[RMDB]
RNA sequence: GGGAACGACUCGAGUAGAGUCGAAAACCUACUCAGUACGUCCUCGUCGUACAGAACGGUAACAUGUUUUCCGAACAUCCGCGCUUGGGUAUACGAGUAUACACCUUACCCAACCCUCGCCAACGGGAGUGCAUCCACGAGUUCGCUCGUGGAUGAAAGUUACCAAAUUCUUCGGAAUUUGGUAACUAAAAGAAACAACAACAACAAC
Reactivity to 2A3 in 0.01 (KOAc 150mM, MgCl2 10mM, bicine 150mM(pH8.5), 24C), signal-to-noise 5, nucleotides 027 to 156: c000c000u010a020c030u030c020a020g000u040a070c000g040u030c010c000u020c020g070u040c010g030u060a110c070a140g070a200a030c020g020g050u110a090a040c060a140u120g070u020u060u090u100c030c020g020a050a030c020a070u080c030c020g050c010g020c080u030u030g010g010g010u060a060u040a110c070g020a020g080u020a040u060a080c120a130c040c050u050u070a040c000c020c020a020a030c020c010c000u050c020g030c020c030a070a020c030g000g000g060a080g040u080g010c010a000u010c000c000a000c000g000a000g010u060u050c140g060c080u000c000g000u000g000g000a000u000g000a000a000
Reactivity to DMS in 0.01 (KOAc 150mM, MgCl2 10mM, bicine 150mM(pH8.5), 24C), signal-to-noise 3, nucleotides 027 to 156: c020c000u000a080c020u000c020a060g000u010a030c020g020u000c020c010u010c050g030u000c090g030u000a120c070a110g030a080a120c050g000g000u000a050a060c090a110u000g020u000u000u010u000c000c020g010a110a120c040a090u010c030c020g000c040g020c030u000u000g010g040g010u000a050u010a080c060g010a090g020u000a120u010a130c110a080c100c050u000u000a040c010c020c010a120a070c030c010c020u000c130g000c020c020a080a080c050g010g000g020a100g020u000g010c000a030u000c000c000a010c000g020a030g000u000u000c300g030c020u000c010g040u000g000g010a010u000g010a000a030